[RMDB]
An RNA of 207 nucleotides, treated with 2A3 and DMS and read out base by base. The reactions ran in a buffer of 150 mM KOAc, 10 mM MgCl2 and 150 mM bicine (pH 8.5), at 24 C. It was measured as part of the RMDB library RNAMAK. For DMS the reverse transcriptase was MarathonRT. Values cover nucleotides 27 to 156. 2A3 adducts were read by reverse transcription with SuperScript II with manganese.

RNA sequence: GGGAACGACUCGAGUAGAGUCGAAAACCUGUUUUCGAACAGGAGAAAGCGUACUACUUUGCAACAGCACGAAUCGUGGGAGAUGUUUCCCAAAUAGGAAACAUCGAAGAACACGACGUGACAUGCAAAGUAUCGCAGUUGGCGUGUUCGCACGCAAGAGGCACAUCAAUUUCGAUUGAUGUGCCUCAAAAGAAACAACAACAACAAC
Reactivity to 2A3 in 0.01 (KOAc 150mM, MgCl2 10mM, bicine 150mM(pH8.5), 24C), signal-to-noise 3, nucleotides 027 to 156: c030c000u000g000u000u050u020u070c300g150a090a010c010a010g010g090a100g150a070a070a000g000c020g060u060a080c100u000a000c040u020u000u000g000c030a090a120c050a300g020c000a000c000g060a210a180u000c000g000u000g010g010g000a020g000a020u000g010u000u000u000c010c000c030a210a300a010u300a050g000g000a000a000a000c000a000u000c020g080a090a030g000a000a000c000a000c000g020a000c000g000u000g020a080c030a070u030g010c000a030a040a010g010u020a050u300c010g000c010a030g000u080u150g050g010c030g000u020g040u130u180c300g000c180a020c000g000c020a000a040
Reactivity to DMS in 0.01 (KOAc 150mM, MgCl2 10mM, bicine 150mM(pH8.5), 24C), signal-to-noise 1, nucleotides 027 to 156: c000c010u000g020u000u010u000u050c220g030a070a050c050a070g000g030a160g000a100a160a160g040c010g030u000a170c120u000a010c000u010u010u000g010c010a060a080c010a220g000c000a000c000g000a080a110u000c000g000u000g000g010g000a300g000a000u000g030u000u000u000c000c010c000a010a100a160u000a040g000g000a010a010a000c000a020u010c010g050a010a150g010a120a170c020a050c010g000a010c000g030u010g000a010c040a300u000g000c060a000a010a100g020u000a020u000c020g060c010a120g020u020u000g000g010c000g080u000g020u000u000c200g110c070a020c000g020c000a060a180